[RMDB]
RNA sequence: GGGAACGACUCGAGUAGAGUCGAAAAGCCGUAAACGCAUCCGGCGAAUAAGAUGCAUGAGCGAAAGCUCUAAGAUAAUUGGCCGUUUGGUAGGGGCCGUAGAUCCUACUUAUUAAUGCUCGAGAAGUGUGGAGCGAUCAUCACGCAAGACUAACAACGAUCAUUACUGAUUCGUCAGUAAUGAUCGAAAAGAAACAACAACAACAAC
Reactivity to 2A3 in 0.01 (KOAc 150mM, MgCl2 10mM, bicine 150mM(pH8.5), 24C), signal-to-noise 6, nucleotides 027 to 156: g010c010c000g030u050a110a100a030c050g010c000a010u010c030c000g000g000c000g020a040a050u130a070a030g010a010u020g010c040a040u070g010a000g000c010g040a050a020a020g000c010u000c010u010a060a040g020a100u140a140a100u150u130g030g000c030c020g060u080u120u100g030g000u010a020g020g000g000g020c010c020g020u010a010g010a030u010c000c020u010a010c000u020u010a030u060u120a070a060u090g010c010u020c050g050a040g030a150a040g050u060g040u080g090g020a030g020c020g010a040u050c030a030u060c020a040c040g010c040a060a040g050a120c050u090a120a030c080a050a040
Reactivity to DMS in 0.01 (KOAc 150mM, MgCl2 10mM, bicine 150mM(pH8.5), 24C), signal-to-noise 3, nucleotides 027 to 156: g040c020c000g030u000a100a250a100c060g050c000a090u000c050c020g000g030c020g040a080a110u000a090a080g030a120u000g000c030a180u000g000a070g010c010g020a160a120a190g010c000u000c010u000a070a090g000a190u000a070a130u000u010g000g030c000c020g020u000u000u000g040g030u000a090g040g000g020g010c040c070g020u000a120g000a080u010c020c000u000a050c030u010u000a080u000u010a080a120u000g000c000u000c020g010a070g000a080a050g020u010g020u020g010g010a120g030c040g000a070u000c050a110u000c050a050c000g000c030a000a090g000a300c030u010a060a070c050a100a200
Structure probing data (2A3 and DMS) for a 207-nucleotide construct.
2A3 is a SHAPE reagent: it acylates the 2'-hydroxyl of flexible nucleotides of all four kinds.
2A3 adducts were read by reverse transcription with SuperScript II with manganese.
It was measured as part of the RMDB library OK3TST.